[RMDB]
RNA sequence: GGGAACGACUCGAGUAGAGUCGAAAACGCAAGUGAAAUGGGUGGACCAGCGUUGACACGCUGUGCCAUGGUCGAGUUAGCACACCAGUGAAGCUGCGCCGUUGACACCGCCUGGACGACGGUAGGGCGGAGCGACUCUUUUCGAAGAGUCGCUCCGAAAAGAAACAACAACAACAAC
Reactivity to DMS in 0.01 (KOAc 150mM, MgCl2 10mM, bicine 150mM(pH8.5), 24C), signal-to-noise 2, nucleotides 027 to 126: c080g010c110a100a160g000u000g000a080a070a020u000g020g060g150u060g000g000a120c130c000a000g000c000g030u000u140g080a220c190a070c050g040c020u010g070u040g000c000c000a030u000g000g050u000c110g010a080g020u010u010a140g030c050a030c030a160c060c070a040g020u050g000a050a160g000c020u000g000c090g050c000c000g000u000u040g010a190c090a060c080c050g000c100c050u010g000g000a070c090g000a100c040g000g000u060a110g000g000g060
Reactivity to 2A3 in 0.01 (KOAc 150mM, MgCl2 10mM, bicine 150mM(pH8.5), 24C), signal-to-noise 3, nucleotides 027 to 126: c040g020c030a000a180g040u100g130a090a000a070u100g040g030g040u010g000g050a110c030c010a000g020c000g030u120u090g100a060c080a010c160g020c010u050g050u070g010c020c010a000u050g000g000u040c060g010a110g090u100u110a020g120c050a000c010a040c050c010a040g040u030g160a060a000g000c030u060g000c000g000c010c000g020u040u040g030a070c000a020c090c000g100c030c030u090g020g080a030c040g000a010c010g060g020u050a050g080g050g050